The record gives the reactivity of an RNA of 207 nucleotides to 2A3. 2A3 adducts were read by reverse transcription with SuperScript II with manganese. The data come from the RNA Mapping Database (RMDB), library OK3TST. The reactions ran in a buffer of 150 mM KOAc, 10 mM MgCl2 and 150 mM bicine (pH 8.5), at 24 C.

[RMDB]
RNA sequence: GGGAACGACUCGAGUAGAGUCGAAAAUUUAGUGAAGAUACACAAAUAUUGUAAUUAUGGCUUUGGCAUCUGCAGGCAAAGGGGAGAAUCGUGCCCUUAGGAGGGGAUGCUGUGGUGAUUGCGAGCAUCAGCCCACACCCUUCUGAGGCUCCUUCCACCUGCUAUGAUCAUUCGUGAUCAUAGCAGGAAAAGAAACAACAACAACAAC
Reactivity to 2A3 in 0.01 (KOAc 150mM, MgCl2 10mM, bicine 150mM(pH8.5), 24C), signal-to-noise 2, nucleotides 027 to 156: u070u070u040a090g020u020g070a090a080g030a070u120a140c020a000c020a030a060a050u250a090u100u120g080u120a060a100u070u100a030u130g040g000c000u080u070u060g020g000c020a020u030c030u060g030c050a020g040g020c020a010a020a130g010g030g020g000a040g000a020a020u100c070g030u020g040c000c000c000u010u010a000g010g000a020g030g010g010g030a070u050g070c160u040g080u130g060g000u050g010a130u070u120g030c050g020a050g050c020a020u030c000a020g140c000c000c000a000c010a000c000c000c000u000u000c020u020g010a010g030g020c020u010c000c000u030u000c010c020a050